[RMDB]
RNA sequence: GGGAACGACUCGAGUAGAGUCGAAAACUGGAUACCUUCGGGUAUCCAGAAAGGCCGAGUAGUGUUGGGUCGCGAAAGGCCAUAAAUAUACAAUCACUCAGAAAAGCCAUAGCUUCGGCUAUGGCAAUCUUGCAAGAAGUUUCGACUUCUUGCAAGAAAAAGAAACAACAACAACAAC
Reactivity to DMS in 0.01 (KOAc 150mM, MgCl2 10mM, bicine 150mM(pH8.5), 24C), signal-to-noise 1, nucleotides 027 to 126: c010u000g000g000a020u000a010c000c000u000u020c210g020g030g020u000a000u000c000c000a030g020a000a070a070g010g010c020c000g020a100g040u000a070g000u000g020u010u020g010g000g010u010c010g030c010g000a180a160a290g010g000c010c010a060u040a010a040a060u020a070u010a060c180a090a070u000c150a020c040u010c050a020g000a090a090a150a180g010c000c000a000u010a000g000c010u020u020c240g050g010c010u000a000u000g010g040c000a020a000

Chemical mapping of a 177-nucleotide RNA with DMS.